Structure probing data (2A3 and DMS) for a 177-nucleotide construct.
It was measured as part of the RMDB libraries RFM100 and RFMREP.
Conditions: 150 mM KOAc, 10 mM MgCl2 and 150 mM bicine (pH 8.5), 24 C.
[RMDB]
RNA sequence: GGGAACGACUCGAGUAGAGUCGAAAAUGUCGGCACUUGAGAAUGUAAAGUGAUGAUCAGCUAUCGUAUUUCAUGUCGUAAUAGUAGUCACGUUAGGGUGAUAUAACGAGGCGAGAGUUAUAUCAUCCAUACAUCGAAUUUUCGAAUUCGAUGUAUGAAAAGAAACAACAACAACAAC
Reactivity to 2A3 in 0.01 (KOAc 150mM, MgCl2 10mM, bicine 150mM(pH8.5), 24C), signal-to-noise 9, nucleotides 027 to 126: u150g030u020c020g020g010c010a010c030u050u060g030a030g050a130a090u140g040u190a080a050a080g030u030g050a050u040g010a050u110c060a030g020c020u050a020u080c020g090u070a170u030u180u080c100a080u150g100u100c020g010u020a020a020u010a040g070u020a020g020u020c030a010c100g050u070u140a080g010g000g010u000g000a000u000a000u000a010a010c030g010a040g090g050c080g030a080g010a000g060u000u000a010u000a000u010c000a000u000c000
Reactivity to DMS in 0.01 (KOAc 150mM, MgCl2 10mM, bicine 150mM(pH8.5), 24C), signal-to-noise 9, nucleotides 027 to 126: u010g010u000c040g010g010c020a040c040u000u000g010a120g010a110a090u010g010u010a040a070a100g010u000g010a050u010g010a080u010c120a120g010c060u010a050u000c040g020u010a100u010u010u010c090a070u010g000u000c030g010u010a070a060u010a050g010u010a100g010u000c040a040c090g010u010u010a100g010g010g010u000g000a010u000a000u000a000a000c000g010a160g010g010c060g010a050g000a160g010u000u000a000u000a000u000c000a000u000c000